[RMDB]
RNA sequence: GGGAACGACUCGAGUAGAGUCGAAAAGAUAUGGAUAUACUGCACCAGGCUAUGAAGUAUCUCGGAAACGAGAUAUGGAGCCUGUGUUAUAUCCUAAGUCAAAGCGUCUGGCUUCGGCCAGACGCAAGCAUUGUAAAUGGUUCGCCAUUUACAAUGCAAAAGAAACAACAACAACAAC
Reactivity to 2A3 in 0.01 (KOAc 150mM, MgCl2 10mM, bicine 150mM(pH8.5), 24C), signal-to-noise 3, nucleotides 027 to 126: g020a020u060a030u120g000g000a000u020a000u030a080c130u190g080c050a070c130c110a230g000g000c020u110a300u300g000a000a000g000u000a000u000c010u010c000g000g000a050a030a030c010g010a000g000a000u000a010u010g000g000a000g000c010c050u020g010u010g010u060u020a000u000a000u000c010c000u000a040a010g030u030c030a180a020a130g020c010g010u000c020u000g030g030c030u120u160c300g200g000c010c010a010g000a010c030g000c000a000a000
Reactivity to DMS in 0.01 (KOAc 150mM, MgCl2 10mM, bicine 150mM(pH8.5), 24C), signal-to-noise 2, nucleotides 027 to 126: g020a030u000a140u010g000g010a010u000a010u000a030c300u010g020c140a170c300c100a030g050g040c000u010a190u010g000a100a180g000u000a010u000c000u000c020g020g000a030a060a020c000g010a020g000a000u000a000u000g000g000a010g010c000c000u000g040u000g010u020u000a010u000a000u000c000c000u000a040a150g010u010c010a100a160a180g010c020g000u010c000u000g010g010c000u000u020c250g030g030c000c000a000g010a020c020g020c010a000a070

Background: This 177-nucleotide RNA was probed chemically with 2A3 and DMS. For 2A3, 3,967 sequencing reads were counted. Conditions: 150 mM KOAc, 10 mM MgCl2 and 150 mM bicine (pH 8.5), 24 C. 2A3 is a SHAPE reagent: it acylates the 2'-hydroxyl of flexible nucleotides of all four kinds.